RNA sequence: GGGAACGACUCGAGUAGAGUCGAAAAAUCAUCGAUGCGCGUGUCAAGGGCAACAUGGCGAGAUUCAUCAAUUCAUCCUGCGCGCCCAACUGCGAGUCGCAGAAAUGGCAUGACGCCGCGACGGGCGGGUCACUGGCUAGUUCGCUAGCCAGUGACCAAAAGAAACAACAACAACAAC
Reactivity to 2A3 in 0.01 (KOAc 150mM, MgCl2 10mM, bicine 150mM(pH8.5), 24C), signal-to-noise 1, nucleotides 027 to 126: a010u070c020a030u090c010g040a000u050g030c060g000c000g040u040g010u050c060a130a200g020g000g000c010a000a010c010a110u100g080g030c060g030a070g000a080u040u090c020a070u020c000a100a200u160u030c050a060u040c040c020u060g000c080g000c050g000c040c000c000a020a020c030u020g070c020g060a070g280u170c070g000c050a000g020a020a060a010u090g020g000c040a010u030g060a090c090g050c080c000g060c020g010a070c050g070g100g040c110g020
Reactivity to DMS in 0.01 (KOAc 150mM, MgCl2 10mM, bicine 150mM(pH8.5), 24C), signal-to-noise 1, nucleotides 027 to 126: a070u000c060a080u010c040g000a080u000g020c010g000c020g000u000g000u000c010a160a210g010g000g000c000a260a120c050a010u000g010g000c170g020a050g010a120u000u000c170a080u000c160a050a020u000u000c100a090u000c120c050u000g000c120g000c100g000c010c000c000a140a290c040u020g000c050g050a190g000u000c050g110c030a050g040a070a190a140u020g010g000c020a020u020g000a080c030g070c020c010g020c000g010a020c120g000g000g020c120g030
The record gives the reactivity of an RNA of 177 nucleotides to 2A3 and DMS. Source: RMDB library OK2TRN, as collected in RNAgym. Values are in units of 0.01, from 0 to 300, in steps of 10. For DMS the reverse transcriptase was MarathonRT.